The record gives the reactivity of an RNA of 207 nucleotides to 2A3.
RNA sequence: GGGAACGACUCGAGUAGAGUCGAAAAAUCAGUCUUAUGAAAGAUCUUGGCAUAAGGACCACCAUGUUUGCAUGCUCUGACUGCACCAGCACUAAAGCUAGUGACUGGUUCAUCCCAGAGGCCUCUGUUAAGGCAAUUAAGGACUCAGUGUCAAACCCAGCGAGAUAUAUUUCGAUAUAUCUCGCUGAAAAGAAACAACAACAACAAC
Reactivity to 2A3 in 0.01 (KOAc 150mM, MgCl2 10mM, bicine 150mM(pH8.5), 24C), signal-to-noise 2, nucleotides 027 to 156: a000u050c000a000g060u000c020u080u130a170u160g040a080a110a050g080a090u030c040u080u050g050g000c020a050u060a120a110g040g040a090c040c000a010c000c010a050u020g080u100u130u140g070c010a020u050g000c010u000c000u020g030a010c020u000g000c030a000c000c000a010g000c000a000c010u040a020a220a160g120c070u020a020g010u030g160a300c000u000g000g000u000u020c000a010u030c000c020c010a010g020a050g040g030c020c020u040c020u070g060u060u110a060a040g050g000c030a040a070u140u080a100a030g030g000a040c030u070c100a100g090u030g030u160c020a060a000a140c020c020
The reactions ran in a buffer of 150 mM KOAc, 10 mM MgCl2 and 150 mM bicine (pH 8.5), at 24 C. Values cover nucleotides 27 to 156.